[RMDB]
RNA sequence: GGGAACGACUCGAGUAGAGUCGAAAAAACGCUUCACAGCCUGAAAGAAGCGCCUGUUAUCAGGACGGUUGAUCCAUUUACCGGUGCAGACCUCUGCAAACACCGGGUUGCAGAACAUCGCGACGGACAAGGGAGGAUACCUUCGGGUAUCCUCCAACAUCUCUAGCGUCUUCGGACGCUAGAGAUGAAAAGAAACAACAACAACAAC
Reactivity to 2A3 in 0.01 (KOAc 150mM, MgCl2 10mM, bicine 150mM(pH8.5), 24C), signal-to-noise 1, nucleotides 027 to 156: a000a000c000g000c000u000u010c000a000c030a160g050c000c000u050g000a070a080a000g010a000a000g000c020g130c020c000u160g030u300u200a200u300c040a010g000g010a000c090g000g000u020u030g010a190u070c050c010a040u070u100u260a040c030c000g020g010u110g010c010a010g020a090c010c030u040c000u010g000c000a040a000a040c070a040c100c020g170g000g000u000u000g040c000a020g010a040a020c020a020u030c040g000c010g040a080c110g010g010a040c040a090a030g110g000g000a000g010g000a000u000a000c000c010u020u060c110g060g040g030u030a000u000c000c000u010c000c000a020a000